[RMDB]
RNA sequence: GGGAACGACUCGAGUAGAGUCGAAAAUUUAUGGAUAAACAAGUGCACCAAGUUCAGUUAACAGACAAAUACUGCAGUGUUAAUGUAGUAGCUUGGCUUUACGCAGCAAUACUUAAUGGUUGCGCUUUACCAUAUAUAGGUUCGCCUAUAUAUGGUAAAAAGAAACAACAACAACAAC
Reactivity to 2A3 in 0.01 (KOAc 150mM, MgCl2 10mM, bicine 150mM(pH8.5), 24C), signal-to-noise 9, nucleotides 027 to 126: u100u090u050a160u130g060g020a050u110a090a080a030c040a080a030g020u020g050c010a000c010c010a020a010g010u030u030c030a010g000u050u030a050a020c020a050g060a020c010a010a040a020u030a040c010u020g010c010a020g030u030g060u300u180a110a090u020g000u030a020g000u010a010g040c080u010u010g010g010c000u040u050u030a030c050g010c030a050g030c020a070a080u040a160c010u050u140a060a030u100g060g000u070u050g020c000g000c000u000u010
Reactivity to DMS in 0.01 (KOAc 150mM, MgCl2 10mM, bicine 150mM(pH8.5), 24C), signal-to-noise 7, nucleotides 027 to 126: u010u010u010a100u010g010g000a120u010a050a080a100c150a050a030g020u000g010c030a060c010c010a030a020g000u000u000c110a120g000u000u000a040a050c210a030g000a040c030a020a040a040u000a020c040u000g010c010a020g000u010g020u010u010a080a080u000g010u000a010g000u000a010g000c200u000u000g000g000c030u000u000u000a050c110g020c120a070g010c130a050a070u010a040c050u000u000a030a080u010g000g010u000u000g020c010g010c050u000u000